[RMDB]
An RNA of 207 nucleotides, treated with 2A3 and read out base by base. The 2A3 profile rests on 1,994 reads. Source: RMDB library RNAMAK, as collected in RNAgym.
RNA sequence: GGGAACGACUCGAGUAGAGUCGAAAAAAGGGAAUUCGUUCCCUUACACUGGGGUCGCUCGGGUGGAGCUGCGUGGCUGAAGCCUCCACGGCCACGCAGCGUUGAAAUCUCUAGCGUGGCGACGGAGGCACCCUCACUAGUCAUAUUCGUAUGACAAAUCGUCACAUGUAUUCGUACAUGUGACGAUAAAAGAAACAACAACAACAAC
Reactivity to 2A3 in 0.01 (KOAc 150mM, MgCl2 10mM, bicine 150mM(pH8.5), 24C), signal-to-noise 2, nucleotides 027 to 156: a000a000g110g020g020a070a030u140u080c190g080u100u020c010c000c000u010u050a040c070a000c050u100g070g030g050g000u060c010g040c030u030c030g080g000g030u070g050g040a040g000c000u020g010c000g000u000g010g000c000u000g010a120a020g010c000c000u020c010c000a020c020g000g030c000c000a000c000g000c000a000g000c000g000u020u020g030a010a020a040u040c080u000c020u040a020g070c030g070u170g110g000c040g020a060c060g010g000a000g010g010c000a020c000c000c000u050c010a080c090u100a040g030u000c000a010u050a040u110u050c260g050u070a000u010g000a010c000a000a160

Values cover nucleotides 27 to 156.